This 177-nucleotide RNA was probed chemically with DMS and 2A3. It was measured as part of the RMDB library OK2TRN. The reactions ran in a buffer of 150 mM KOAc, 10 mM MgCl2 and 150 mM bicine (pH 8.5), at 24 C.

RNA sequence: GGGAACGACUCGAGUAGAGUCGAAAAGAAUUCAACGGUGUCACGAUCGACGGUGAGGACUCGGCCAGCCGCCGCAGGUGCUCGACGUUGGCGGUCAGCCCUGCUAUGCAGCGCUGGGCGAACAGCCGAGACUAACGAUGUUCGCAUCGUUAGUCUCAAAAGAAACAACAACAACAAC
Reactivity to DMS in 0.01 (KOAc 150mM, MgCl2 10mM, bicine 150mM(pH8.5), 24C), signal-to-noise 3, nucleotides 027 to 126: g000a080a080u000u010c070a110a120c050g020g010u010g000u010c080a090c100g000a050u000c070g010a090c120g010g010u000g020a120g010g010a080c150u000c010g000g010c000c020a050g010c030c060g030c010c260g020c050a010g000g020u010g010c020u000c120g020a020c020g000u010u000g010g010c130g000g010u000c020a030g000c000c000c000u000g000c010u000a070u000g010c030a080g030c130g000c000u000g020g000g000c010g010a060a040c150a190g000c070c010
Reactivity to 2A3 in 0.01 (KOAc 150mM, MgCl2 10mM, bicine 150mM(pH8.5), 24C), signal-to-noise 3, nucleotides 027 to 126: g040a020a110u140u110c070a090a040c050g010g030u050g000u010c040a020c070g070a100u090c050g070a050c050g010g020u040g040a080g020g050a060c030u040c020g030g110c020c000a000g020c020c010g020c020c050g000c010a010g000g040u150g080c010u110c150g020a010c000g060u110u110g160g060c080g050g050u000c010a000g000c000c000c020u030g000c000u040a130u250g060c070a020g020c020g000c100u020g000g010g000c000g010a030a020c020a020g030c000c030